[RMDB]
RNA sequence: GGGAACGACUCGAGUAGAGUCGAAAAUACGCACCUGUUCACAUGCCCACAUGUAUACCUGGUCACACACAUACAUGCAGGAACACACAUGCAUACACUUAUGCUCAUCCAUGUACAUUGCACACUAAGGUCAUUACCGGUUCGCCGGUAAUGACCUAAAAGAAACAACAACAACAAC
Reactivity to DMS in 0.01 (KOAc 150mM, MgCl2 10mM, bicine 150mM(pH8.5), 24C), signal-to-noise 2, nucleotides 027 to 126: u000a070c080g010c050a030c040c010u000g000u000u010c050a110c050a160u010g030c060c030c020a150c050a040u000g010u000a110u010a080c050c030u000g000g010u000c140a050c120a060c050a060c030a020u000a090c030a020u000g010c000a170g000g010a030a020c060a070c030a040c060a070u010g000c020a020u000a040c160a060c060u010u000a050u000g030c000u000c050a040u020c070c040a040u010g010u000a030c070a070u000u000g030c060a010c110a010c070u010a080
Reactivity to 2A3 in 0.01 (KOAc 150mM, MgCl2 10mM, bicine 150mM(pH8.5), 24C), signal-to-noise 2, nucleotides 027 to 126: u180a030c050g040c040a060c000c020u010g020u110u090c050a060c030a050u100g000c040c030c000a030c010a050u050g060u070a070u020a070c000c020u050g060g000u080c020a040c000a000c020a000c000a070u060a070c010a040u060g070c000a030g070g040a050a000c060a000c010a000c010a020u060g040c010a030u030a010c040a010c090u120u050a030u150g000c000u010c070a040u020c040c010a040u060g040u030a030c020a120u080u100g050c060a020c010a010c100u080a070
This 177-nucleotide RNA was probed chemically with DMS and 2A3. The data come from the RNA Mapping Database (RMDB), library OK2TST. Conditions: 150 mM KOAc, 10 mM MgCl2 and 150 mM bicine (pH 8.5), 24 C. Values cover nucleotides 27 to 126. The DMS profile rests on 984 reads.